[RMDB]
RNA sequence: GGGAACGACUCGAGUAGAGUCGAAAAAGCCUCCUUGUGCUUAGCACAGGCUGUGUUCCUACACUGACUGUAUAGAAAGAGGAAGGAGAAUAAAACUACCCUGUGUACACCUCAGCCUAGGCCACUGGCAGGAAGUGGUUUUCGAACCACUUCCUGCAAAAGAAACAACAACAACAAC
Reactivity to 2A3 in 0.01 (KOAc 150mM, MgCl2 10mM, bicine 150mM(pH8.5), 24C), signal-to-noise 2, nucleotides 027 to 126: a000g000c000c000u000c010c000u060u160g000u020g020c030u150u170a040g000c000a000c000a000g000g010c100u020g000u000g020u090u030c000c010u020a050c040a040c000u080g130a030c020u000g000u110a090u000a100g190a120a070a040g050a030g080g020a120a000g140g040a140g070a080a140u160a200a070a020a040c010u100a140c000c000c000u020g010u050g010u050a020c040a030c010c000u050c000a000g010c000c020u070a040g000g030c010c000a000c000u040g060
Reactivity to DMS in 0.01 (KOAc 150mM, MgCl2 10mM, bicine 150mM(pH8.5), 24C), signal-to-noise 3, nucleotides 027 to 126: a000g010c010c000u000c260c060u010u040g020u000g030c000u000u020a150g020c020a000c030a000g010g000c070u030g010u030g010u000u000c000c020u030a110c120a110c110u010g000a190c090u020g000u000a090u000a080g020a060a140a090g010a050g000g000a090a050g000g000a110g060a150a050u020a040a090a070a100c020u010a140c050c000c000u030g040u030g020u020a080c160a060c020c020u000c010a120g010c090c080u010a080g000g000c050c000a040c060u000g000